[RMDB]
RNA sequence: GGGAACGACUCGAGUAGAGUCGAAAAACACCAAAACUGAAAACGGAAGGCAAUCCUUCCACGACGAUACUUACUUUCCUUUGAUCGUCGUUACUACUGGCAUAGCCCCAAAGGAGAACAAACAUGAGCGCGGACACUGACUUCGGUCAGUGUCCAACAACAGGAAGCUGUUCGCAGCUUCCUGUUGAAAAGAAACAACAACAACAAC
Reactivity to 2A3 in 0.01 (KOAc 150mM, MgCl2 10mM, bicine 150mM(pH8.5), 24C), signal-to-noise 3, nucleotides 027 to 156: a000c060a060c030c030a060a090a020a020c170u180g050a060a070a040a020c040g020g000a000a000g010g000c200a070a220u220c000c010u000u000c000c000a000c020g000a000c000g000a010u100a120c030u120u030a050c040u090u220u130c010c020u070u050u030g010a010u030c000g000u000c000g010u010u020a030c040u020a020c010u010g000g000c050a150u080a100g050c010c010c000c010a040a030a020g040g010a030g030a070a060c080a090a110a000c070a120u210g050a050g150c080g000c070g030g000a000c000a000c000u000g000a010c010u060u040c120g040g000u000c010a000g000u000g000u010c000c000a000a000
Reactivity to DMS in 0.01 (KOAc 150mM, MgCl2 10mM, bicine 150mM(pH8.5), 24C), signal-to-noise 1, nucleotides 027 to 156: a110c050a090c030c030a030a060a160a300c060u010g020a300a200a080a060c010g000g010a020a060g110g100c070a200a100u000c020c000u010u000c000c010a090c000g050a040c020g050a100u000a040c140u000u000a030c160u000u000u010c020c020u000u010u020g020a020u000c000g050u000c000g060u000u010a070c030u000a060c080u000g000g000c090a090u000a170g030c040c000c000c060a100a030a030g010g000a100g050a100a100c180a080a050a200c160a070u020g030a060g040c030g010c240g020g000a050c010a000c000u020g010a000c010u000u000c250g070g000u020c000a010g070u000g000u000c000c000a020a000

Source: RMDB library M2RFPK, as collected in RNAgym.
The record gives the reactivity of an RNA of 207 nucleotides to 2A3 and DMS.
For DMS, 1,264 sequencing reads were counted.
2A3 adducts were read by reverse transcription with SuperScript II with manganese.
The reactions ran in a buffer of 150 mM KOAc, 10 mM MgCl2 and 150 mM bicine (pH 8.5), at 24 C.